[RMDB]
RNA sequence: GGGAACGACUCGAGUAGAGUCGAAAAGAUAUGGAACGGUACGUAGCGUUGAAAUAACUCGGAAACGAGUUAUGGAGCUGCGUACACGUUCCUAAGUCAAACGUUUCGUAGUUCGCUACGAAACGAAGUCUAGUGGCGUGUUCGCACGCCACUAGACAAAAGAAACAACAACAACAAC
Reactivity to DMS in 0.01 (KOAc 150mM, MgCl2 10mM, bicine 150mM(pH8.5), 24C), signal-to-noise 1, nucleotides 027 to 126: g000a060u000a300u020g000g010a000a010c000g010g010u000a000c010g020u000a010g000c030g000u000u000g040a200a190a000u000a000a020c010u010c000g000g000a080a130a300c030g000a020g010u000u000a000u000g000g000a050g030c000u000g010c030g000u000a000c000a050c000g020u000u010c000c010u000a030a100g000u010c020a090a120a280c050g000u000u000u000c000g000u000a000g020u000u000c300g000c000u000a020c000g040a030a030a000c000g000a060a050